Chemical mapping of a 177-nucleotide RNA with 2A3 and DMS. The data come from the RNA Mapping Database (RMDB), library OK2TRN. The reactions ran in a buffer of 150 mM KOAc, 10 mM MgCl2 and 150 mM bicine (pH 8.5), at 24 C. For DMS the reverse transcriptase was MarathonRT. The 2A3 profile rests on 4,162 reads.

RNA sequence: GGGAACGACUCGAGUAGAGUCGAAAAUCUGUUUACAAGUUAUCGUUAAGUCCAUGUCUGACUACGAUUCCGUAAACAGAAGCCAGUUUGCGUCAAGUCCGACAUGGACUCUUGGCAGAACUGAUCACUACUCCUAUGAAUUCGUUCAUAGGAGUAGAAAAGAAACAACAACAACAAC
Reactivity to 2A3 in 0.01 (KOAc 150mM, MgCl2 10mM, bicine 150mM(pH8.5), 24C), signal-to-noise 2, nucleotides 027 to 126: u010c000u010g000u000u080u090a060c020a040a060g020u070u050a150u140c080g040u100u170a100a010g000u000c010c020a040u060g050u000c070u060g020a000c000u050a060c100g030a060u160u010c070c020g000u020a000a010a000c000a000g110a050a000g150c030c010a020g000u030u010u000g040c040g000u030c040a030a020g010u000c010c010g020a120c100a090u040g000g000a000c000u000c010u030u000g030g000c000a030g000a110a100c090u170g100a250u300c100a000
Reactivity to DMS in 0.01 (KOAc 150mM, MgCl2 10mM, bicine 150mM(pH8.5), 24C), signal-to-noise 2, nucleotides 027 to 126: u010c010u010g000u000u020u000a060c030a050a070g010u010u010a050u010c150g020u000u010a090a050g010u000c000c040a070u000g010u010c080u000g000a020c010u000a100c110g010a070u010u010c190c050g000u000a010a010a000c000a040g010a070a110g020c130c090a070g010u000u000u000g010c040g030u000c050a070a020g000u000c010c070g010a080c100a050u000g010g000a020c000u000c000u010u000g000g000c040a300g000a020a080c110u000g000a240u010c280a300